RNA sequence: GGGAACGACUCGAGUAGAGUCGAAAAUAGAGAGCUAUUUGGCAAAAUAGCUAAAUAUGUAUUUAAUAAGUAUGAGUGGCCAGAAAGCCUAGACAAAGAGGUUGAUCGGAUUUAUUUAGAAUAUCGUGAUAAAGGAAAGCUAGGUCGUAAUAAAGAAUCCAUACGUAUGGUUCGCCAUACGUAUGGAAAAAGAAACAACAACAACAAC
Reactivity to DMS in 0.01 (KOAc 150mM, MgCl2 10mM, bicine 150mM(pH8.5), 24C), signal-to-noise 1, nucleotides 027 to 156: u000a220g000a100g000a060g040c010u000a000u000u000u000g040g020c140a140a120a020a060u010a080g020c010u000a030a050a090u010a040u010g010u000a050u000u010u030a040a130u000a030a190g010u000a050u020g010a110g020u030g000g010c020c040a120g000a040a090a140g020c030c050u000a080g020a040c020a050a050a140g000a050g050g050u000u000g010a100u000c040g040g020a070u000u010u000a090u040u000u020a120g000a090a100u020a050u000c070g010u020g020a160u000a020a070a080g020g020a110a050a110g030c010u000a010g020g020u000c060g030u000a020a110u000a000a040a180g000a140a150